[RMDB]
An RNA of 177 nucleotides, treated with DMS and 2A3 and read out base by base. For DMS the reverse transcriptase was MarathonRT. Conditions: 150 mM KOAc, 10 mM MgCl2 and 150 mM bicine (pH 8.5), 24 C.
RNA sequence: GGGAACGACUCGAGUAGAGUCGAAAAGUCUAGCGAUUUAGGGAUCCGAUCCGGGUAGCAGAACUCAACUGCAUGAGUAGACACGCAAGUCGCGUAUUGGCCGACCGGCCAAGGAUCUGCUAGACGACAUAUAUUAAUGGUUCGCCAUUAAUAUAUGAAAAGAAACAACAACAACAAC
Reactivity to DMS in 0.01 (KOAc 150mM, MgCl2 10mM, bicine 150mM(pH8.5), 24C), signal-to-noise 9, nucleotides 027 to 126: g010u000c000u000a010g010c010g020a170u010u010u010a150g020g010g010a020u000c010c010g000a270u000c020c020g000g000g010u010a100g010c010a070g000a090a080c070u000c090a060a120c080u000g010c130a110u000g000a080g020u000a130g010a090c090a020c020g010c030a100a130g010u010c170g010c020g010u000a100u000u010g010g020c010c020g000a090c040c050g010g000c130c100a030a170g010g000a010u000c000u000g010c000u000a010g010a020c010g010a160
Reactivity to 2A3 in 0.01 (KOAc 150mM, MgCl2 10mM, bicine 150mM(pH8.5), 24C), signal-to-noise 9, nucleotides 027 to 126: g000u000c000u000a000g000c010g070a090u080u110u300a200g080g020g000a000u000c010c010g010a030u010c010c010g000g040g060u100a030g000c020a020g030a120a050c040u040c100a050a110c060u130g030c060a080u040g010a020g060u060a040g050a030c040a010c050g020c030a110a160g220u220c070g010c010g000u030a070u080u130g110g010c020c010g040a070c020c010g000g000c010c010a020a010g000g000a000u000c030u060g000c000u000a000g000a000c000g000a000